RNA sequence: GGGAACGACUCGAGUAGAGUCGAAAACUCCCAUCCAACUCCUAUUCCAACACGUCCUCGUCGUACAGAGUGGUAACAUGUGUCGCCACAUAUCCAAGCUUGGGUACACGGGCUUGACCCAACCCCUAAAACAGAGACGAGUUCGCUCGUCUCUGAAGUCAGGAACUAGGUUCGCCUAGUUCCUGACAAAAGAAACAACAACAACAAC
Reactivity to 2A3 in 0.01 (KOAc 150mM, MgCl2 10mM, bicine 150mM(pH8.5), 24C), signal-to-noise 2, nucleotides 027 to 156: c010u000c000c020c010a010u070c020c010a060a130c030u000c000c000u040a050u040u010c030c020a040a050c020a020c110g050u060c030c020u030c060g080u050c020g040u070a080c050a060g080a060g120u000g050g020u070a040a100c060a180u170g060u030g030u100c030g010c030c020a030c050a050u150a050u030c010c020a030a010g000c040u060u070g000g000g000u050a020c040a010c040g030g000g000c000u090u190g060a210c000c000c000a020a090c000c000c000c000u100a080a050a010a020c030a000g010a010g010a000c000g000a020g010u030u040c210g050c020u000c000g000u040c020u000c000u000g030a000a000